[RMDB]
RNA sequence: GGGAACGACUCGAGUAGAGUCGAAAAGCUUAAUAACCUGCGCUGAGCCCUUCUCCCCCAGCUUGCCUGUGUCCUAGGGAAUUGGAAGGUCAUCCUUCACAGGAUCGUGUGGAAGUCCUACUCGGGGUCCAAACAUGGUAAUUCGUUACCAUGUUAAACCAUCUGGUAAUUUCGAUUACCAGAUGGUAAAAGAAACAACAACAACAAC
Reactivity to DMS in 0.01 (KOAc 150mM, MgCl2 10mM, bicine 150mM(pH8.5), 24C), signal-to-noise 2, nucleotides 027 to 156: g020c040u000u000a090a150u000a080a070c000c010u000g020c030g010c060u010g000a110g000c040c010c070u000u000c030u010c060c010c030c020c040a080g030c020u000u000g000c030c010u000g000u020g020u000c030c040u000a100g010g010g000a080a150u010u000g030g010a100a060g010g000u000c060a100u000c040c000u000u000c080a120c060a070g000g000a040u000c090g060u000g020u000g030g000a130a080g000u000c030c020u010a020c030u010c030g010g010g030g010u010c000c020a110a010a030c010a010u000g010g030u000a010a090u010u000c270g030u000u000a030c000c000a010u000g000u000u000a010a080
Reactivity to 2A3 in 0.01 (KOAc 150mM, MgCl2 10mM, bicine 150mM(pH8.5), 24C), signal-to-noise 2, nucleotides 027 to 156: g020c040u120u160a110a000u120a170a180c020c020u060g010c070g000c070u080g080a080g020c020c000c000u090u040c100u080c020c000c000c000c000a000g010c020u060u110g000c020c030u040g020u030g030u080c020c040u050a050g000g010g070a050a100u090u100g040g020a050a020g030g000u080c020a060u130c010c010u050u110c020a010c000a020g020g040a050u030c030g010u030g020u030g080g020a060a040g010u040c000c000u010a020c000u010c010g030g000g010g010u000c010c000a040a000a000c000a010u000g000g000u010a060a000u040u020c060g010u010u000a000c000c000a010u000g000u000u010a040a010